[RMDB]
RNA sequence: GGGAACGACUCGAGUAGAGUCGAAAAGAACGCCAAGAGGCGAGACCGAGACCGAGAAUCACGCUAUCUCGGAAAAGUGGAAUAGCGUCAGGAGUCCACUCUCGGAAAAGCCGAAAGAACGGCAGAAACUACGGGUAAAUUUCGAUUUACCCGUAGUAAAAGAAACAACAACAACAAC
Reactivity to DMS in 0.01 (KOAc 150mM, MgCl2 10mM, bicine 150mM(pH8.5), 24C), signal-to-noise 6, nucleotides 027 to 126: g020a120a090c140g000c000c000a110a110g010a270g010g000c010g000a050g000a300c010c000g000a000g000a160c000c000g000a010g000a040a090u020c090a080c110g010c050u000a110u010c010u000c000g000g000a020a070a080a100g020u010g000g010a040a040u030a060g010c030g030u040c190a110g050g010a110g020u010c000c010a010c000u000c000u000c000g000g000a030a070a130a220g010c000c010g010a120a070a110g010a130a130c140g010g000c000a060g010a100a100
Reactivity to 2A3 in 0.01 (KOAc 150mM, MgCl2 10mM, bicine 150mM(pH8.5), 24C), signal-to-noise 6, nucleotides 027 to 126: g030a040a010c040g000c000c010a120a050g100a090g090g010c050g020a020g090a020c000c000g000a000g000a010c000c010g000a000g030a040a080u160c080a030c070g020c040u040a020u060c000u020c000g000g000a090a140a000a000g010u000g010g040a070a110u140a180g030c040g100u140c120a130g050g210a040g050u010c010c000a000c000u010c000u000c000g010g000a000a100a010a030g000c000c000g020a050a040a000g070a050a020c040g010g000c020a000g120a050a100